[RMDB]
RNA sequence: GGGAACGACUCGAGUAGAGUCGAAAAGACGCCUGAUGGCGAACGUGCGCAAGAUAAGAAUGGUGGUAUAUACUGCCAAGAAUAACUAAUGGACGGCAGAGCGCACGUACCACCAAAGUCCACCAGACCAUACGAGGGUGUUCGCACCCUCGUAUGGAAAAGAAACAACAACAACAAC
Reactivity to DMS in 0.01 (KOAc 150mM, MgCl2 10mM, bicine 150mM(pH8.5), 24C), signal-to-noise 2, nucleotides 027 to 126: g000a070c000g000c030c000u020g010a140u000g020g050c020g030a060a020c000g000u040g010c000g020c000a110a140g000a180u000a030a070g000a190a210u000g060g040u020g020g000u000a200u020a160u030a150c010u000g000c000c010a020a040g020a100a060u030a010a030c180u030a100a050u020g010g020a250c110g000g100c060a020g010a050g060c030g020c000a030c040g010u000a080c070c010a090c120c150a220a100a070g000u100c000c030a010c130c000a130g010a230
Reactivity to 2A3 in 0.01 (KOAc 150mM, MgCl2 10mM, bicine 150mM(pH8.5), 24C), signal-to-noise 4, nucleotides 027 to 126: g050a020c030g010c000c030u260g300a220u300g000g000c000g000a000a000c000g010u000g010c000g000c010a080a080g020a290u170a170a120g080a060a110u070g000g000u010g010g050u010a030u000a010u030a120c000u010g000c000c000a020a020g050a050a170u150a080a020c150u120a050a080u140g050g040a030c030g030g010c010a010g010a010g030c000g000c000a010c000g010u010a040c000c020a000c000c060a010a000a010g020u020c000c010a000c000c000a020g020a070
An RNA of 177 nucleotides, treated with DMS and 2A3 and read out base by base. For 2A3 the reverse transcriptase was SuperScript II with manganese. Conditions: 150 mM KOAc, 10 mM MgCl2 and 150 mM bicine (pH 8.5), 24 C. For DMS the reverse transcriptase was MarathonRT. Values are in units of 0.01, from 0 to 300, in steps of 10.